[RMDB]
RNA sequence: GGGAACGACUCGAGUAGAGUCGAAAAAACUAAAAAUCCUAGUUUCAUGCUUUCGGCAAUAGCUGAAUGUGACAUAACUGCCGCUAACCCAACCACUGCCAGCGCUUUAGUUAAUUUAUGCAUAGUGGUUAUACAUCUUGUUCGCAAGAUGUAUAACAAAAGAAACAACAACAACAAC
Reactivity to DMS in 0.01 (KOAc 150mM, MgCl2 10mM, bicine 150mM(pH8.5), 24C), signal-to-noise 5, nucleotides 027 to 126: a090a060c100u020a010a060a080a080a090u010c040c020u000a090g010u000u000u000c080a090u000g010c030u000u000u000c020g010g030c040a140a080u000a040g010c020u000g000a050a030u000g010u010g000a070c110a030u010a090a080c080u000g010c050c030g010c050u000a070a130c050c020c020a120a090c070c030a030c060u000g000c060c060a080g010c110g010c070u000u000u000a050g010u000u000a040a090u000u010u000a030u020g010c050a080u000a040g010u010g010
Reactivity to 2A3 in 0.01 (KOAc 150mM, MgCl2 10mM, bicine 150mM(pH8.5), 24C), signal-to-noise 2, nucleotides 027 to 126: a020a030c300u300a300a240a040a040a130u170c050c040u060a070g080u070u140u030c030a060u110g030c020u030u030u050c000g010g050c060a180a260u090a150g000c040u040g030a010a030u090g010u020g060a030c010a050u180a150a020c040u040g020c040c010g000c010u040a090a070c000c020c010a010a010c040c010a010c050u080g060c050c030a080g030c100g070c050u080u070u140a040g040u000u060a070a080u160u130u100a160u190g000c020a000u030a100g030u010g130

Background
Structure probing data (DMS and 2A3) for a 177-nucleotide construct. The RNA was probed in 150 mM KOAc, 10 mM MgCl2 and 150 mM bicine (pH 8.5) at 24 C. DMS adducts were read by reverse transcription with MarathonRT. The 2A3 profile rests on 786 reads. The data come from the RNA Mapping Database (RMDB), library OK2TST.